[RMDB]
RNA sequence: GGGAACGACUCGAGUAGAGUCGAAAACUACGCGGCGGAUCUGCUCUUCGGCGGCGCCGGAGAGUGCCGCUCCGAGCUGUCCGGAUGCUGCGAUGAGAGAGCCGGUCUUCUCGUGCACGACUCGGAGAUGUCGCUGCAUGUUCGCAUGCAGCGACAUAAAAGAAACAACAACAACAAC
Reactivity to DMS in 0.01 (KOAc 150mM, MgCl2 10mM, bicine 150mM(pH8.5), 24C), signal-to-noise 2, nucleotides 027 to 126: c030u000a070c060g010c100g010g020c070g010g000a030u000c100u000g030c000u000c010u000u000c100g010g030c000g010g020c140g000c010c000g000g000a010g000a060g030u000g030c040c020g000c000u000c090c110g060a110g020c020u010g000u000c000c000g010g000a080u010g010c040u000g010c030g000a150u000g010a080g000a070g000a080g000c040c050g000g010u000c010u000u000c030u010c040g030u000g000c110a030c050g020a100c020u000c020g000g000a140g000
Reactivity to 2A3 in 0.01 (KOAc 150mM, MgCl2 10mM, bicine 150mM(pH8.5), 24C), signal-to-noise 1, nucleotides 027 to 126: c010u140a010c030g010c050g050g000c000g070g040a040u100c060u100g010c000u010c040u030u050c030g080g000c000g060g090c030g000c020c000g000g010a020g010a000g010u080g000c050c010g010c020u010c000c010g010a010g000c030u050g080u020c030c000g020g010a070u110g000c030u000g000c000g090a090u210g030a030g010a000g010a020g090c050c030g070g040u000c020u080u040c080u070c000g040u050g020c060a040c090g060a040c020u030c070g090g000a090g020